RNA sequence: GGGAACGACUCGAGUAGAGUCGAAAAGAGCUUUUGUCCGGAAUGGUGCCGCCGUGAUCGGGCCAUGCAAUAGUUGCCAACGACAACUAUGCUCCGGUUGCUCAGGCAGCGUAACGCUGCUUGAAAGAUGACGGCAAUCGCUUCGGCGAUUGCCGAACUGAAACGUUUAGUUCGCUAAACGUUUCAGAAAAGAAACAACAACAACAAC
Reactivity to DMS in 0.01 (KOAc 150mM, MgCl2 10mM, bicine 150mM(pH8.5), 24C), signal-to-noise 1, nucleotides 027 to 156: g020a050g010c020u000u010u000u000g010u010c000c000g020g010a130a070u010g020g010u010g040c030c040g070c080c040g040u000g000a100u000c040g000g020g000c010c050a090u000g010c040a080a080u010a000g010u010u000g020c010c010a170a190c200g000a050c000a000a010c030u000a020u000g010c070u010c010c020g000g000u000u000g010c030u010c010a030g000g000c000a000g010c000g010u000a140a120c100g030c010u000g010c000u000u000g010a050a100a150g000a160u000g000a170c030g000g000c000a010a010u000c000g060c010u020u000c300g020g000c010g030a000u000u010g000c010c000g010a010a010
Reactivity to 2A3 in 0.01 (KOAc 150mM, MgCl2 10mM, bicine 150mM(pH8.5), 24C), signal-to-noise 2, nucleotides 027 to 156: g010a010g000c040u050u110u180u200g100u030c020c000g000g040a040a050u050g100g000u090g300c010c010g010c010c080g230u180g050a150u090c000g000g010g010c000c010a030u060g000c000a040a260u000a010g000u010u020g010c060c070a130a070c180g100a100c000a000a000c000u010a000u030g000c030u000c000c000g020g000u020u070g000c010u000c000a000g010g000c000a010g010c020g120u190a090a030c200g010c000u000g000c010u010u030g010a000a010a000g080a030u130g020a020c050g000g000c000a020a000u000c000g000c040u060u040c240g100g000c010g000a010u000u010g000c000c000g010a010a000

Overview: The record gives the reactivity of an RNA of 207 nucleotides to DMS and 2A3. For DMS the reverse transcriptase was MarathonRT. Reactivities are given for positions 27 through 156. The RNA was probed in 150 mM KOAc, 10 mM MgCl2 and 150 mM bicine (pH 8.5) at 24 C. The 2A3 profile rests on 1,559 reads.